[RMDB]
RNA sequence: GGGAACGACUCGAGUAGAGUCGAAAAUGAUGUCCUGCCUGGACUUUACCCAAAAAAUCCAUUUCAAAAGUUCACAUUUAGGGCUAAGUGUAGUGGCUCAUACCUGUAAUCCCAGCUGAGGCAGGUGAACCAGAGAAUUCUUCGGAAUUCUCUGGUUAAAAGAAACAACAACAACAAC
Reactivity to DMS in 0.01 (KOAc 150mM, MgCl2 10mM, bicine 150mM(pH8.5), 24C), signal-to-noise 1, nucleotides 027 to 126: u000g000a110u020g040u000c040c020u000g010c130c090u000g030g030a020c030u000u000u000a090c020c020c040a000a030a120a040a030a070u000c040c040a040u000u010u020c090a100a080a040a050g000u010u010c040a050c070a090u000u000u020a110g040g020g000c020u000a120a130g010u010g000u000a050g000u020g010g000c060u000c070a100u000a060c000c040u010g020u000a080a080u010c050c000c000a160g000c070u000g030a070g000g010c000a030g010g010u000g010